[RMDB]
Structure probing data (2A3) for a 207-nucleotide construct. Conditions: 150 mM KOAc, 10 mM MgCl2 and 150 mM bicine (pH 8.5), 24 C. For 2A3 the reverse transcriptase was SuperScript II with manganese. Reactivities are given for positions 27 through 156. The data come from the RNA Mapping Database (RMDB), library M2RFPK.

RNA sequence: GGGAACGACUCGAGUAGAGUCGAAAAGACAAGAUUCACGAAACCCAAGGUGCAUGCCGAGGUGCGGUAGGCCUCGUUAACAAAGCGCAAAAAAAUAGUCGCAAACGACGAAAACUACGCACUCGCAAAAAGCGGCACGUCUUCGGACGUGCCGCAACCCUUUUUAGAAGUUCGCUUCUAAAAAGGGAAAAGAAACAACAACAACAAC
Reactivity to 2A3 in 0.01 (KOAc 150mM, MgCl2 10mM, bicine 150mM(pH8.5), 24C), signal-to-noise 1, nucleotides 027 to 156: g080a010c040a080a030g040a120u120u110c080a040c070g100a060a090a100c010c010c010a040a000g150g010u060g060c060a000u050g040c080c070g070a100g000g110u020g020c020g210g000u040a020g010g000c000c000u000c000g000u000u070a080a070c040a120a140a040g000c010g030c060a030a060a000a000a000a000a120u170a080g020u190c020g000c030a020a000a000c020g010a000c020g050a000a010a190a000c000u000a000c000g000c010a000c000u020c020g020c020a000a090a110a020a000g020c040g060g060c030a040c040g000u000c000u030u020c020g050g010a000c010g000u010g020c070c000g020c000a010a010